Structure probing data (DMS and 2A3) for a 207-nucleotide construct. The reactions ran in a buffer of 150 mM KOAc, 10 mM MgCl2 and 150 mM bicine (pH 8.5), at 24 C. Source: RMDB library RNAMAK, as collected in RNAgym.
RNA sequence: GGGAACGACUCGAGUAGAGUCGAAAAGGGGUCGUCGAAUGUGGAGCCUUAAGAGGGUAGGCUGAAGCCUCCACGGCCUACCUACCCACCUUAAGGAACUACUCCACGAUCGACGACGGAGGCACCCAAAACGUGAGGCCCUUCGGGGCCUCACGAAGACUUAAGUUAGGUUCGCCUAACUUAAGUCAAAAGAAACAACAACAACAAC
Reactivity to DMS in 0.01 (KOAc 150mM, MgCl2 10mM, bicine 150mM(pH8.5), 24C), signal-to-noise 1, nucleotides 027 to 156: g000g000g050g020u020c020g110u000c010g010a060a090u000g060u060g020g000a030g030c010c020u010u020a030a010g000a300g010g010g020u000a000g020g020c040u000g010a060a090g010c020c010u000c050c040a300c090g000g040c000c000u000a000c000c000u010a020c000c000c000a300c040c000u000u000a010a020g000g000a050a050c060u000a290c010u020c020c000a060c000g000a090u000c020g040a020c010g030a030c000g010g020a040g060g080c070a210c000c000c000a060a030a090a230c000g020u010g020a020g060g020c000c000c000u000u010c300g020g060g000g000c000c000u000c010a000c020g000a110a150
Reactivity to 2A3 in 0.01 (KOAc 150mM, MgCl2 10mM, bicine 150mM(pH8.5), 24C), signal-to-noise 2, nucleotides 027 to 156: g060g000g030g000u010c000g000u000c000g010a030a030u080g000u000g000g000a000g000c000c000u000u010a000a010g000a000g000g010g010u000a000g000g000c010u020g040a080a000g010c000c010u000c000c010a000c000g010g000c000c000u000a000c000c000u030a050c070c050c020a070c010c000u000u010a000a020g020g060a010a020c040u280a100c000u030c010c010a000c010g000a010u000c000g000a000c000g000a000c010g000g000a000g000g000c010a050c010c000c000a010a130a010a010c010g000u000g000a000g040g000c020c010c040u040u070c300g020g000g010g000c000c010u030c010a000c000g010a010a020